[RMDB]
RNA sequence: GGGAACGACUCGAGUAGAGUCGAAAAGCGGGGCUUGAAACGCGGGUAGCGCGCACGCCCGGCGAAGAAGUUCGCAUACGCGGUGUGCUGGUGCCGAAGUGUCUGCUGCAACGGCACGCUGGACACCUAGAACAUACCGUAUUCGUACGGUAUGUAAACCCAGUUAGAUCUUCGGAUCUAACUGGGUAAAAGAAACAACAACAACAAC
Reactivity to 2A3 in 0.01 (KOAc 150mM, MgCl2 10mM, bicine 150mM(pH8.5), 24C), signal-to-noise 2, nucleotides 027 to 156: g010c070g010g020g020g030c020u040u100g100a110a120a030c030g020c020g000g080g040u150a060g140c030g000c000g000c020a010c040g000c000c040c000g010g000c010g000a020a020g070a030a020g130u010u010c050g000c120a030u030a270c150g010c040g070g020u030g010u030g080c020u050g000g000u010g000c000c020g000a080a090g030u040g050u150c110u190g050c080u040g000c020a080a040c020g000g000c010a010c020g020c010u030g010g010a000c000a000c000c010u000a060g030a020a010c010a000u000a000c000c000g010u000a010u020u030c100g050u000a000c000g000g000u000a000u010g000u020a070a000
Reactivity to DMS in 0.01 (KOAc 150mM, MgCl2 10mM, bicine 150mM(pH8.5), 24C), signal-to-noise 1, nucleotides 027 to 156: g010c030g020g000g060g030c020u020u020g000a150a110a120c020g030c010g080g040g070u000a190g040c050g050c040g000c010a140c100g030c010c010c000g020g010c030g040a040a300g000a140a180g010u010u020c070g050c050a140u010a150c040g010c050g010g000u000g030u000g000c010u010g010g020u000g000c000c020g000a050a280g030u010g030u000c130u000g000c050u030g080c050a140a300c070g000g000c000a010c020g000c020u000g020g000a060c010a000c030c000u000a150g000a150a080c010a020u000a000c020c010g020u000a020u000u000c260g010u010a020c010g020g010u020a010u010g000u000a020a070